RNA sequence: GGGAACGACUCGAGUAGAGUCGAAAACAGCAGGCGCAGCAGCAGCAAUCGCAUCAGCACCAGCAGCAGCAGCAGCAGCAGGAACGUUAUGUGUGGGAGAUGCGAACCCGUAGCCCAAAUGUGACGAUAAUUUAUCGUCAUUCGUGACGAUAAAUUAAAAAGAAACAACAACAACAAC
Reactivity to 2A3 in 0.01 (KOAc 150mM, MgCl2 10mM, bicine 150mM(pH8.5), 24C), signal-to-noise 4, nucleotides 027 to 126: c020a010g060c010a010g060g000c030g010c040a050g000c010a010g000c000a000g010c000a030a070u060c030g010c030a030u030c030a020g070c030a020c030c010a010g020c010a000g000c000a000g020c000a000g010c000a000g010c010a000g010c010a010g040g080a090a050c050g030u100u070a080u100g110u010g030u050g020g010g000a120g010a050u060g020c010g010a040a040c000c000c040g020u060a040g120c000c000c010a040a100a040u180g040u070g040a030c060g010a020
Reactivity to DMS in 0.01 (KOAc 150mM, MgCl2 10mM, bicine 150mM(pH8.5), 24C), signal-to-noise 9, nucleotides 027 to 126: c090a110g010c100a060g000g010c060g020c050a050g010c040a070g010c030a060g000c060a080a080u000c060g010c040a040u000c050a100g020c050a090c040c050a060g000c050a050g010c040a060g010c050a060g000c050a060g010c040a040g010c030a070g010g000a090a070c090g000u000u000a050u000g010u000g020u000g000g000g000a090g010a050u000g000c030g010a050a080c070c070c020g010u010a090g010c010c010c020a040a060a070u010g020u000g000a090c080g010a170
Structure probing data (2A3 and DMS) for a 177-nucleotide construct. 2A3 is a SHAPE reagent: it acylates the 2'-hydroxyl of flexible nucleotides of all four kinds. The reactions ran in a buffer of 150 mM KOAc, 10 mM MgCl2 and 150 mM bicine (pH 8.5), at 24 C.